[RMDB]
RNA sequence: GGGAACGACUCGAGUAGAGUCGAAAAACUAGGAGCGCACAUCUCUCUAAGACUGUACGACAGUCUGUCUCUCUAGCUCGCUUGUUCAACGAGAGAGAGAGAGCGUUGGAACAAGUGUGCAACGAAAACUGCGCAAUCAAUUCGUUGAUUGCGCAGUAAAAGAAACAACAACAACAAC
Reactivity to DMS in 0.01 (KOAc 150mM, MgCl2 10mM, bicine 150mM(pH8.5), 24C), signal-to-noise 1, nucleotides 027 to 126: a100c040u000a110g000g010a170g010c060g010c090a020c020a160u000c050u020c050u000c080u000a130a060g010a010c000u000g010u000a090c230g010a120c060a010g010u000c000u000g000u000c000u000c000u000c000u000a040g000c010u000c000g020c010u000u000g000u010u040c120a100a050c000g000a030g000a040g000a010g030a010g000a000g000a020g000c230g030u000u000g000g030a050a080c170a050a080g010u000g000u000g000c060a130a130c090g010a050a050a070
Reactivity to 2A3 in 0.01 (KOAc 150mM, MgCl2 10mM, bicine 150mM(pH8.5), 24C), signal-to-noise 1, nucleotides 027 to 126: a000c050u070a080g060g020a050g030c040g050c010a000c010a130u080c050u000c020u000c000u080a000a000g000a000c000u010g020u160a060c130g110a030c170a010g020u000c010u000g020u010c030u010c010u000c000u010a010g030c000u000c040g070c080u140u240g140u280u240c060a060a040c000g000a010g000a020g000a020g000a000g000a000g000a000g040c060g080u060u070g010g010a090a010c040a090a100g020u060g000u010g000c000a000a050c040g050a010a010a010
Structure probing data (DMS and 2A3) for a 177-nucleotide construct. Values cover nucleotides 27 to 126. DMS (dimethyl sulfate) methylates the pairing face of unpaired adenines and cytosines. It was measured as part of the RMDB library M2PK90.